[RMDB]
RNA sequence: GGGAACGACUCGAGUAGAGUCGAAAAUUCCCUUCUCUCGUCUUCCUCGGUCAACCUCCGGAGUUCCUCUUCCUCCUCCUUGCUGAGUGACUUUCCUCCCGCGCUCAGCUGCUUCUUCUUGUUCUCGAGUUAAAAGGAGGUUCGCCUCCUUUUAACUAAAAGAAACAACAACAACAAC
Reactivity to DMS in 0.01 (KOAc 150mM, MgCl2 10mM, bicine 150mM(pH8.5), 24C), signal-to-noise 3, nucleotides 027 to 126: u000u000c000c000c000u000u000c020u010c030u000c050g010u000c040u000u000c030c020u000c040g010g010u000c060a100a120c060c020u000c010c020g010g010a160g020u000u010c020c010u000c030u000u010c020c010u000c030c010u000c020c040u010u000g010c010u010g000a050g020u000g010a090c100u000u000u000c040c010u000c010c010c060g000c050g000c020u000c010a030g000c020u000g010c070u000u010c060u000u000c070u000u000g000u000u000c020u000c040g010